[RMDB]
RNA sequence: GGGAACGACUCGAGUAGAGUCGAAAAUGUCUGUGCCGCCACGUUUACCGCAGCGCUGUUCACAAUAGCCCAGAUCUGCGAGCAAAGGCAGCGGCCGUCGGUGCAGGAGUGGGCGGAGGCACCGAGGGUGUCAGCUGCACUUCGGUGCAGCUGACACAAAAGAAACAACAACAACAAC
Reactivity to DMS in 0.01 (KOAc 150mM, MgCl2 10mM, bicine 150mM(pH8.5), 24C), signal-to-noise 2, nucleotides 027 to 126: u010g030u010c080u000g020u010g030c020c010g000c010c060a130c020g000u010u030u000a090c010c020g020c020a060g000c150g000c010u000g010u010u010c060a100c170a130a110u010a160g010c080c040c000a060g000a060u010c050u010g000c040g000a100g010c060a040a040a110g000g020c010a050g020c040g000g000c020c030g010u010c010g000g000u000g000c040a100g000g000a110g000u000g000g010g000c090g000g030a160g000g000c010a040c000c010g010a100g010g010
Reactivity to 2A3 in 0.01 (KOAc 150mM, MgCl2 10mM, bicine 150mM(pH8.5), 24C), signal-to-noise 3, nucleotides 027 to 126: u110g030u040c070u040g160u130g030c010c000g020c010c000a070c090g020u060u100u080a040c000c020g020c000a020g000c030g000c010u020g000u120u130c080a010c040a250a230u090a140g030c020c040c000a000g040a200u100c080u070g000c060g070a110g000c070a060a030a000g070g100c000a010g000c030g070g110c040c000g090u130c030g000g020u030g070c030a020g040g100a120g070u200g020g070g030c080g020g020a060g000g020c000a020c010c020g000a070g050g080